[RMDB]
RNA sequence: GGGAACGACUCGAGUAGAGUCGAAAAGAUAUGGAUAGUCCUUGUCUAUCGUGAGAGCGAGGAUCUAUUGAUCGGAAACGAUCACGGUAGGGAGCUCUACACGAUAGACAAGGACUAUCCUAAGUCACAUUACCCAAAUGUUCGCAUUUGGGUAAUGAAAAGAAACAACAACAACAAC
Reactivity to DMS in 0.01 (KOAc 150mM, MgCl2 10mM, bicine 150mM(pH8.5), 24C), signal-to-noise 4, nucleotides 027 to 126: g010a040u010a300u000g010g000a010u000a000g020u010c000c000u000u010g010u010c000u010a010u000c000g030u000g000a050g000a020g010c010g010a170g030g020a030u010c000u010a020u000u000g010a020u000c010g000g010a160a120a250c000g020a010u000c010a050c300g010g000u020a010g000g000g000a060g030c010u000c010u000a170c000a000c000g000a010u000a010g000a000c000a000a000g000g010a000c000u000a000u000c000c000u010a000a070g020u010c050a300
Chemical mapping of a 177-nucleotide RNA with DMS. Conditions: 150 mM KOAc, 10 mM MgCl2 and 150 mM bicine (pH 8.5), 24 C. Source: RMDB library TTRINS, as collected in RNAgym.